[RMDB]
RNA sequence: GGGAACGACUCGAGUAGAGUCGAAAAGAUAUGGAAGUCGUGGAGAAGUCCAACAGCAUUUCUCGGAAACGAGAAAUGACAUGGACGUAACACGAGCUUCCUAAGUCAAACGCGGCUUCGGCCGCGAGUAUUUCUGGUACUUCGGUACCAGAAAUACAAAAGAAACAACAACAACAAC
Reactivity to DMS in 0.01 (KOAc 150mM, MgCl2 10mM, bicine 150mM(pH8.5), 24C), signal-to-noise 3, nucleotides 027 to 126: g010a090u010a300u010g000g000a030a010g040u000c000g070u000g000g040a100g000a110a240g000u000c000c000a000a130c260a130g010c010a020u000u000u000c000u000c000g020g020a120a120a190c010g000a010g000a000a010a010u000g010a020c080a190u000g000g020a010c000g010u000a100a250c020a000c000g000a070g000c010u000u000c000c000u000a060a110g010u010c030a130a130a280c030g020c010g000g000c000u000u010c190g020g010c010c000g010c000g010a020
Reactivity to 2A3 in 0.01 (KOAc 150mM, MgCl2 10mM, bicine 150mM(pH8.5), 24C), signal-to-noise 1, nucleotides 027 to 126: g010a020u080a060u180g000g000a000a000g030u030c000g000u020g000g080a090g010a020a000g010u000c020c010a100a040c150a140g070c020a000u000u020u020c020u000c020g030g030a130a090a040c010g000a000g000a030a000a000u000g000a040c010a060u050g000g030a000c010g010u010a010a010c010a000c000g070a010g000c000u020u040c010c000u010a100a010g040u020c050a040a050a130c050g030c010g050g000c020u070u160c300g240g000c000c000g000c000g000a010